[RMDB]
RNA sequence: GGGAACGACUCGAGUAGAGUCGAAAAGAUAUGGAGCUACUUCGAUAAGCGUGUAUCGGAAACGAUACAACGCUUUUGACGAAGGUCUCCUAAGUCAAAGACGUCUCAGGUUCGCCUGAGACGUCAACAUAUACCUCCGGUUCGCCGGAGGUAUAUGAAAAGAAACAACAACAACAAC
Reactivity to 2A3 in 0.01 (KOAc 150mM, MgCl2 10mM, bicine 150mM(pH8.5), 24C), signal-to-noise 4, nucleotides 027 to 126: g030a010u060a040u110g000g010a000g000c120u270a190c010u300u020c000g150a210u050a300a020g010c000g020u000g010u010a000u010c010g010g000a080a030a000c020g000a000u010a010c050a130a050c020g000c000u020u010u030u080g050a010c000g000a000a010g000g020u020c000u010c010c000u000a130a020g030u020c060a140a050a050g010a000c000g010u000c000u010c000a000g120g030u050u100c300g100c110c010u000g020a000g010a000c000g000u000c020a000a010
Reactivity to DMS in 0.01 (KOAc 150mM, MgCl2 10mM, bicine 150mM(pH8.5), 24C), signal-to-noise 6, nucleotides 027 to 126: g020a030u000a300u010g000g010a020g000c070u020a140c000u000u000c010g000a160u000a030a010g010c010g040u000g010u000a000u000c000g010g000a090a060a140c000g010a010u000a000c000a040a040c010g020c000u000u000u010u000g000a190c120g000a000a010g000g000u000c010u000c000c000u000a040a110g000u000c030a090a120a130g000a030c000g020u000c000u000c000a010g020g010u000u000c260g010c000c010u000g000a010g000a000c000g000u000c000a010a070
Structure probing data (2A3 and DMS) for a 177-nucleotide construct.
The data come from the RNA Mapping Database (RMDB), library TTRDEL.